This 177-nucleotide RNA was probed chemically with DMS and 2A3.
For 2A3, 1,270 sequencing reads were counted.
For DMS the reverse transcriptase was MarathonRT.
The DMS profile rests on 1,072 reads.
The data come from the RNA Mapping Database (RMDB), library OK2TST.
The RNA was probed in 150 mM KOAc, 10 mM MgCl2 and 150 mM bicine (pH 8.5) at 24 C.
[RMDB]
RNA sequence: GGGAACGACUCGAGUAGAGUCGAAAAUUGAGUCAAGGUCUGGCUCUGUUGACCAGGCUGGCGAGCACUGGCAUGAUCAUGGCUCACUUCAACCUUGAACUCCUGGUCUUAAGGGAUCCUCUCACCAGGUCGUCAAACUAUUCGUAGUUUGACGACCAAAAGAAACAACAACAACAAC
Reactivity to DMS in 0.01 (KOAc 150mM, MgCl2 10mM, bicine 150mM(pH8.5), 24C), signal-to-noise 1, nucleotides 027 to 126: u000u010g010a040g020u000c020a060a140g000g010u000c050u010g030g020c050u020c040u010g000u000u000g000a170c010c010a030g000g050c200u000g010g040c060g000a040g010c030a040c070u000g010g010c010a100u000g000a050u000c010a050u000g000g000c010u000c040a050c120u000u010c200a100a090c070c010u000u010g000a040a140c130u000c010c080u000g000g030u000c030u000u000a140a070g000g010g010a080u010c020c040u000c060u000c100a060c060c110a070
Reactivity to 2A3 in 0.01 (KOAc 150mM, MgCl2 10mM, bicine 150mM(pH8.5), 24C), signal-to-noise 2, nucleotides 027 to 126: u040u070g020a010g000u040c010a060a020g040g000u030c050u040g080g060c010u050c060u100g140u040u060g030a120c000c000a010g030g050c110u070g040g050c030g010a050g000c000a040c190u060g040g000c130a240u150g070a150u170c000a010u030g020g000c010u020c030a040c000u090u070c060a030a090c050c010u040u050g000a060a050c000u020c020c020u040g030g070u030c040u110u050a040a050g000g000g060a040u040c000c040u000c000u020c030a050c010c030a030